RNA sequence: GGGAACGACUCGAGUAGAGUCGAAAACUGGAUACCUUCGGGUAUCCAGAAAGGCCGAGUAGUGUUGGGUCGCGAUAGGCCAUAAAUAAACAAUCACUCAGAAAAGCCAUAGCUUCGGCUAUGGCAACCUACACUAGAAGUUCGCUUCUAGUGUAGGAAAAGAAACAACAACAACAAC
Reactivity to 2A3 in 0.01 (KOAc 150mM, MgCl2 10mM, bicine 150mM(pH8.5), 24C), signal-to-noise 3, nucleotides 027 to 126: c000u000g010g000a000u000a000c010c000u030u070c120g110g000g000u000a000u010c010c000a000g000a030a030a000g020g020c010c020g030a030g020u130a010g010u040g060u100u070g070g010g010u060c020g000c030g120a120u100a120g010g000c000c000a000u070a010a060a010u040a000a040a010c040a010a080u130c030a010c050u030c020a020g110a070a160a030a010g000c000c000a000u010a000g000c020u050u060c300g080g000c000u000a000u010g000g000c000a000a000
Reactivity to DMS in 0.01 (KOAc 150mM, MgCl2 10mM, bicine 150mM(pH8.5), 24C), signal-to-noise 4, nucleotides 027 to 126: c010u000g010g000a010u000a010c000c000u000u010c180g020g010g010u000a000u000c000c000a010g010a020a110a100g000g000c010c030g020a110g010u010a060g010u000g010u010u000g010g010g030u000c030g030c100g010a160u010a150g000g000c000c010a100u010a040a050a070u000a060a070a130c110a070a060u000c060a020c010u010c040a150g020a090a070a080a150g010c000c000a000u000a010g000c000u000u010c270g020g010c000u000a000u010g000g000c010a000a010